[RMDB]
RNA sequence: GGGAACGACUCGAGUAGAGUCGAAAAGCGUACUACUAUGUCAGCAGCAGCUGCUCAACAGCAGCGUCUACCCACCCGAUCCCAAAUAGGAUCGGAGGACGCUGACAUGAGCAAGGACAUAGUAUCGCAAAGGUAUUAUACUUCGGUAUAAUACCAAGCAAACAUGCAGCUUCGGCUGCAUGUUUGCAAAAGAAACAACAACAACAAC
Reactivity to 2A3 in 0.01 (KOAc 150mM, MgCl2 10mM, bicine 150mM(pH8.5), 24C), signal-to-noise 1, nucleotides 027 to 156: g010c010g080u140a060c010u000a000c000u000a040u000g000u020c000a000g010c050a050g040c080a060g080c140u000g040c010u020c000a020a250c040a070g100c000a000g000c000g020u060c010u030a090c050c000c000a040c040c000c000g000a000u080c050c080c020a210a250a080u300a180g020g020a000u020c000g010g000a010g000g030a000c000g000c000u000g010a050c000a100u060g000a000g050c000a000a110g060g000a000c020a000u050a000g000u040a030u300c010g000c000a040a080a000g030g000u000a000u000u000a000u000a000c000u010u010c270g050g000u000a000u000a000a000u000a000c000c000a010a000